RNA sequence: GGGAACGACUCGAGUAGAGUCGAAAAGCGCUGGAUAACGGCCAGAGCCGUGAAGAGUGGAAAGGCCAGGCUGAAACCAACAAGAUUUUGAAUACUGGCAGUAUUAUCCCGGUUGAUGGCCUGUGUGUGUGUGGUUCCAAUUCGUUGGAACCACACAAAAAGAAACAACAACAACAAC
Reactivity to DMS in 0.01 (KOAc 150mM, MgCl2 10mM, bicine 150mM(pH8.5), 24C), signal-to-noise 1, nucleotides 027 to 126: g010c040g000c040u010g020g020a060u010a160a070c040g010g030c000c130a090g010a100g020c010c000g040u000g000a130a250g000a070g030u000g060g010a050a050a160g000g000c030c010a000g000g020c130u010g010a020a030a030c040c010a050a070c240a210a100g010a050u000u010u000u000g000a170a090u010a060c030u020g000g000c030a130g000u010a020u010u000a080u010c020c070c050g000g000u010u010g000a200u000g000g010c030c010u000g000u020g000u010g000